[RMDB]
RNA sequence: GGGAACGACUCGAGUAGAGUCGAAAAGGGUGUCAGCUAGCCUGCAACUUAGGAUAUAUUGUCACAUAGGGUUAUUAACCACUAAGACCAAAUUUGAAGGCCCUAUGUCUCCUAAUACUUAGUGGUAUCCACGCUUUUAUUUCGAUAAAAGCGUGGAAAAAGAAACAACAACAACAAC
Reactivity to DMS in 0.01 (KOAc 150mM, MgCl2 10mM, bicine 150mM(pH8.5), 24C), signal-to-noise 2, nucleotides 027 to 126: g000g030g020u000g020u000c030a030g000c090u010a110g060c140c010u010g000c100a070a090c060u000u010a040g020g010a060u000a100u010a080u010u010g000u020c100a020c020a000u000a020g000g000g000u000u020a060u010u050a160a030c010c000a000c000u020a000a030g010a180c120c120a060a100a110u020u000u010g020a110a140g010g000c000c030c020u000a010u000g000u000c080u000c020c040u000a070a020u010a120c000u000u010a000g010u000g020g020u010a300
Reactivity to 2A3 in 0.01 (KOAc 150mM, MgCl2 10mM, bicine 150mM(pH8.5), 24C), signal-to-noise 2, nucleotides 027 to 126: g030g010g020u060g120u150c030a010g000c050u060a040g010c000c060u000g000c020a060a020c050u070u130a040g010g000a010u030a010u000a060u170u210g060u060c030a010c010a010u010a000g020g020g040u030u070a130u150u150a090a010c050c000a000c010u000a010a000g010a010c010c100a060a100a170u140u120u150g080a110a020g030g000c000c000c030u000a020u000g010u000c020u000c030c000u050a070a050u050a150c000u000u000a000g000u000g030g050u030a000

Conditions: 150 mM KOAc, 10 mM MgCl2 and 150 mM bicine (pH 8.5), 24 C.
Chemical mapping of a 177-nucleotide RNA with DMS and 2A3.
DMS adducts were read by reverse transcription with MarathonRT.
For 2A3 the reverse transcriptase was SuperScript II with manganese.